[RMDB]
RNA sequence: GGGAACGACUCGAGUAGAGUCGAAAAGGCUCAGGAAACUGAGCCAAGAAUGCACAGAGAAAAGAACUAGUGACUGUGCAGAACAGAAUAAAAGUACACUAGAAAAUAGGAGCAGGAAACUGCUCCACAGGGAUAGGUACUUCGGUACCUAUCCCUGAAAAGAAACAACAACAACAAC
Reactivity to 2A3 in 0.01 (KOAc 150mM, MgCl2 10mM, bicine 150mM(pH8.5), 24C), signal-to-noise 3, nucleotides 027 to 126: g040g000c000u000c000a000g000g040a030a080a070c000u000g000a000g020c000c000a000a010g000a010a030u010g030c000a020c000a000g090a000g050a060a160a100a030g150a130a060c020u020a010g010u020g070a040c000u000g000u000g000c000a000g030a070a070c080a000g140a190a050u180a110a080a020a010g150u070a030c010a030c050u000a000g140a140a060a030a010u170a130g000g000a000g000c010a000g000g040a010a080a150c010u000g010c000u000c000c000a000
Reactivity to DMS in 0.01 (KOAc 150mM, MgCl2 10mM, bicine 150mM(pH8.5), 24C), signal-to-noise 1, nucleotides 027 to 126: g000g020c000u000c000a000g030g000a080a120a020c010u000g020a000g050c000c000a020a030g010a060a070u010g000c070a030c060a040g000a130g110a120a050a170a050g000a130a080c020u000a000g090u000g000a150c000u000g000u000g060c000a040g050a180a230c120a170g030a180a010u000a110a000a060a270g050u000a100c100a010c000u000a000g000a270a040a040a150u000a170g030g030a010g050c000a000g000g030a130a070a100c000u000g000c000u000c000c030a000

The record gives the reactivity of an RNA of 177 nucleotides to 2A3 and DMS.
The data come from the RNA Mapping Database (RMDB), library OK1LIB.
The reactions ran in a buffer of 150 mM KOAc, 10 mM MgCl2 and 150 mM bicine (pH 8.5), at 24 C.
For 2A3 the reverse transcriptase was SuperScript II with manganese.